[RMDB]
RNA sequence: GGGAACGACUCGAGUAGAGUCGAAAAGCUCGGUGACACCGCGUCUGCCUGGGUCCGAAAGAUUUCUUGUCGCAAAUCUACAAGACAUUGGUUAACGUGUGGGCCGCUUGAGCGGCCGCUCGGCGGGUCAUGGGUGGCGCUUCGGUGCUAUCCAUGAAAAAGAAACAACAACAACAAC
Reactivity to 2A3 in 0.01 (KOAc 150mM, MgCl2 10mM, bicine 150mM(pH8.5), 24C), signal-to-noise 7, nucleotides 027 to 126: g020c010u010c020g030g040u040g040a020c010a020c050c010g010c010g020u000c030u040g010c000c000u020g050g000g030u000c010c000g040a090a080a000g020a010u010u030u010c030u050u130g120u110c050g030c130a040a030a060u030c010u030a020c030a090a010g010a010c020a040u010u080g030g010u070u110a050a010c010g000u030g010u140g040g070g010c000c000g000c030u160u300g030a030g050c000g000g010c010c000g000c010u020c010g050g000c000g010g000g020
Reactivity to DMS in 0.01 (KOAc 150mM, MgCl2 10mM, bicine 150mM(pH8.5), 24C), signal-to-noise 4, nucleotides 027 to 126: g010c010u010c030g020g020u010g000a080c090a100c030c030g010c030g000u010c060u000g010c020c010u000g010g000g010u000c010c030g000a140a130a070g000a050u000u010u010c030u020u030g000u030c200g010c200a030a050a050u020c030u020a030c260a130a060g000a020c040a070u020u000g000g000u010u010a070a180c030g010u000g000u020g010g020g010c010c010g020c000u010u030g020a080g010c020g000g020c070c040g000c020u010c030g000g000c020g000g000g000